RNA sequence: GGGAACGACUCGAGUAGAGUCGAAAAAUGAAGCUUACCAAAGAGGAAGUUUGUCUGUGGACGUUCUCUGAGGGAAUUUUAAAACACAAGACUACACUCGUAGAAAGUCUUACUGGUCUGCUUUCGGACACGGGUUCGACACCCGUCGCCUCCACCAGACGUUAUAUUUGUUCGCAAAUAUAACGUCAAAAGAAACAACAACAACAAC
Reactivity to DMS in 0.01 (KOAc 150mM, MgCl2 10mM, bicine 150mM(pH8.5), 24C), signal-to-noise 3, nucleotides 027 to 156: a100u000g040a060a100g020c040u010u020a210c040c010a020a250a060g000a030g000g010a040a040g000u000u000u000g010u010c100u010g060u000g010g010a060c010g000u000u000c000u000c000u000g010a300g010g000g000a060a060u000u000u000u000a060a040a060a140c070a040c080a060a130g010a080c040u000a080c060a070c040u000c050g010u010a090g010a040a120a070g010u000c030u000u000a060c080u000g000g010u000c050u000g000c040u010u000u000c030g030g000a060c050a040c000g030g010g000u000u000c190g000a150c200a170c000c000c010g050u010c100g020c010c000u000c010c020a040c110c020a250
Reactivity to 2A3 in 0.01 (KOAc 150mM, MgCl2 10mM, bicine 150mM(pH8.5), 24C), signal-to-noise 6, nucleotides 027 to 156: a010u150g010a040a020g050c060u150u220a050c010c010a040a060a020g030a020g030g010a090a040g020u030u090u060g020u030c020u020g030u060g030g020a030c020g000u010u000c020u020c040u060g030a090g020g040g040a000a020u100u090u090u140a050a070a040a000c030a010c030a140a110g010a000c000u070a020c050a020c040u060c030g030u040a030g100a120a090a020g070u050c040u070u110a090c090u080g020g000u030c030u050g020c020u050u060u110c040g010g020a000c000a000c030g020g010g000u100u110c040g030a030c010a030c100c010c010g000u000c030g020c000c020u040c020c010a030c010c020a040